[RMDB]
RNA sequence: GGGAACGACUCGAGUAGAGUCGAAAACCACCGUUUGAGGAUCGAAGCACUAAAUUGAAUCAAACUAGCUUAAGUUUAGCGUGUCUGUCCGCAUGCUUAAGUGAAAUUAAAGACGAGACUAAACGUGUAGUACUGAAGGUAGAGUAAUUUCGGACGGCGUGAACUUAAACUUCGGUUUAAGUUCACGAAAAGAAACAACAACAACAAC
Reactivity to 2A3 in 0.01 (KOAc 150mM, MgCl2 10mM, bicine 150mM(pH8.5), 24C), signal-to-noise 5, nucleotides 027 to 156: c000c000a020c020c030g000u000u000u040g030a010g030g050a070u090c070g060a100a020g060c070a050c130u250a200a150a140u110u140g050a010a020u020c010a020a010a000c010u020a000g000c000u000u000a010a000g010u060u040u150a050g000c010g010u030g000u010c010u020g020u000c000c000g000c000a040u010g000c000u010u010a000a000g000u000g000a010a010a040u160u150a050a030a020g040a010c110g090a000g010a020c040u070a070a160a030c040g020u030g030u070a070g030u030a100c040u050g050a110a030g030g000u070a030g000a020g080u090a070a140u030u090u090c020g030g000a000c020g030g040
Reactivity to DMS in 0.01 (KOAc 150mM, MgCl2 10mM, bicine 150mM(pH8.5), 24C), signal-to-noise 2, nucleotides 027 to 156: c020c030a200c120c050g040u000u000u030g000a090g010g010a180u000c060g000a130a130g010c080a100c050u000a050a120a150u020u000g020a150a160u000c040a040a040a050c000u000a300g000c020u000u000a010a020g010u000u000u000a050g000c010g020u000g040u000c030u000g040u000c020c000g040c000a110u000g020c000u000u000a000a010g010u010g000a110a050a120u000u020a050a050a080g000a040c010g010a120g010a060c000u000a040a050a080c090g030u020g000u000a070g020u000a070c040u030g020a080a090g020g000u010a070g010a130g010u000a060a160u000u010u000c020g030g020a180c060g000g020